[RMDB]
RNA sequence: GGGAACGACUCGAGUAGAGUCGAAAAACAUCAGAAUUUUGGAGACUCACAGCUUGUGCGUUUGGGUGUUGAUUAUCCAUACUACCCACAACUUGCACAGCUUGUUCCAUCUCAGGCAGCUAUGCUGAUGGGAGGAACCUUUCGAGGUUCCUCCCAUAAAAGAAACAACAACAACAAC
Reactivity to 2A3 in 0.01 (KOAc 150mM, MgCl2 10mM, bicine 150mM(pH8.5), 24C), signal-to-noise 1, nucleotides 027 to 126: a010c040a060u130c070a080g140a250a080u030u040u090u110g090g030a010g010a060c000u070c020a030c000a020g060c010u180u290g040u010g000c040g040u010u010u000g010g000g000u000g030u070u060g060a200u030u270a060u150c030c010a010u070a160c010u060a000c000c000c000a030c060a010a010c010u120u110g000c000a010c010a000g000c060u040u090g010u010u000c000c010a200u000c040u000c010a040g090g110c010a010g080c000u220a030u300g060c010u020g030
Reactivity to DMS in 0.01 (KOAc 150mM, MgCl2 10mM, bicine 150mM(pH8.5), 24C), signal-to-noise 1, nucleotides 027 to 126: a030c080a060u010c100a080g000a090a120u000u000u000u000g030g010a300g010a010c000u040c120a100c160a090g010c010u010u020g040u000g010c010g000u000u000u000g020g000g010u010g020u000u000g000a130u020u010a170u030c090c040a050u000a020c030u010a050c000c000c000a030c300a020a030c040u010u030g040c000a030c000a040g030c000u020u010g040u000u000c060c090a100u010c060u000c030a230g010g010c040a050g000c090u020a090u000g020c010u000g010

The record gives the reactivity of an RNA of 177 nucleotides to 2A3 and DMS. For 2A3 the reverse transcriptase was SuperScript II with manganese. The 2A3 profile rests on 714 reads. The reactions ran in a buffer of 150 mM KOAc, 10 mM MgCl2 and 150 mM bicine (pH 8.5), at 24 C.